[RMDB]
RNA sequence: GGGAACGACUCGAGUAGAGUCGAAAAAGUGGGUAAGGGUGCGCGCAGUGGUCUCAGAUGUAUGCGGUCUGGUAUUUUUUUGGUCGAAUCGUGAAUGUUGUAACUAAUAGGGGUUUAUGCGCUCGUAACCAUGUAAUCCAUUCGUGGAUUACAUGGUAAAAGAAACAACAACAACAAC
Reactivity to DMS in 0.01 (KOAc 150mM, MgCl2 10mM, bicine 150mM(pH8.5), 24C), signal-to-noise 4, nucleotides 027 to 126: a100g030u000g000g000g000u000a090a100g010g010g010u000g010c100g010c050g010c030a080g010u010g010g010u000c040u000c050a080g010a060u000g020u000a070u000g010c070g010g020u000c030u000g010g000u010a000u000u000u000u010u010u010u000g010g010u010c040g000a060a040u000c050g010u000g000a090a120u010g000u000u000g020u000a070a110c090u010a050a090u000a080g000g000g000g010u000u000u000a070u010g010c080g010c040u010c060g000u000a090
Reactivity to 2A3 in 0.01 (KOAc 150mM, MgCl2 10mM, bicine 150mM(pH8.5), 24C), signal-to-noise 2, nucleotides 027 to 126: a000g040u030g020g030g070u110a040a040g060g000g010u050g030c040g010c010g000c020a030g050u030g070g030u010c040u040c060a020g020a040u090g050u120a050u080g080c050g020g000u000c010u020g090g010u060a160u010u070u010u030u010u050u060g060g000u040c020g030a000a040u040c030g060u080g080a080a050u100g010u050u030g020u060a030a030c000u030a070a070u050a110g010g010g030g010u030u080u050a100u070g030c020g000c010u010c030g010u010a000